[RMDB]
Chemical mapping of a 207-nucleotide RNA with DMS and 2A3. DMS adducts were read by reverse transcription with MarathonRT. The RNA was probed in 150 mM KOAc, 10 mM MgCl2 and 150 mM bicine (pH 8.5) at 24 C.

RNA sequence: GGGAACGACUCGAGUAGAGUCGAAAAGACAAUCCAGGGAACCGGAUGUCAUCACGUUGUUGCAGUACCAGAUGGCAUCUUAAAUCCGAUCUGCAAAUAAGCAUGUAGAAAGUUGAUGUGGGCUUUAAAAACGUGGUGCUGUUCGCAGCACCACGAAUCAAAUUAACAUCUUCGGAUGUUAAUUUGAAAAAGAAACAACAACAACAAC
Reactivity to DMS in 0.01 (KOAc 150mM, MgCl2 10mM, bicine 150mM(pH8.5), 24C), signal-to-noise 2, nucleotides 027 to 156: g020a100c050a060a090u010c020c070a080g020g030g000a090a130c050c150g010g010a050u010g000u010c020a060u000c030a190c210g050u000u000g010u000u000g010c030a150g040u000a090c060c010a160g000a030u010g000g000c010a040u000c030u010u000a080a110a120u000c020c030g000a120u000c020u000g060c040a040a100a080u010a100a180g040c030a090u000g000u000a050g000a070a090a180g010u010u000g000a060u000g030u000g010g000g000c010u030u000u000a030a050a040a070a120c020g050u010g010g040u010g000c000u020g020u000u010c220g020c060a030g020c000a000c010c000a010c000g000a010a060
Reactivity to 2A3 in 0.01 (KOAc 150mM, MgCl2 10mM, bicine 150mM(pH8.5), 24C), signal-to-noise 2, nucleotides 027 to 156: g050a020c050a020a110u080c040c030a010g060g030g050a050a040c060c070g000g010a010u010g030u000c000a020u020c030a040c180g100u090u120g040u070u140g120c070a070g060u100a070c010c030a030g010a010u000g010g000c000a000u000c000u020u000a030a020a000u000c000c040g040a080u020c030u050g050c000a030a100a130u170a170a090g060c070a070u080g010u010a030g110a140a140a060g000u010u040g030a070u040g050u080g030g080g060c050u090u060u130a020a040a010a000a010c000g000u000g030g030u000g000c010u020g000u040u070c270g000c090a000g020c020a000c000c000a000c000g020a000a000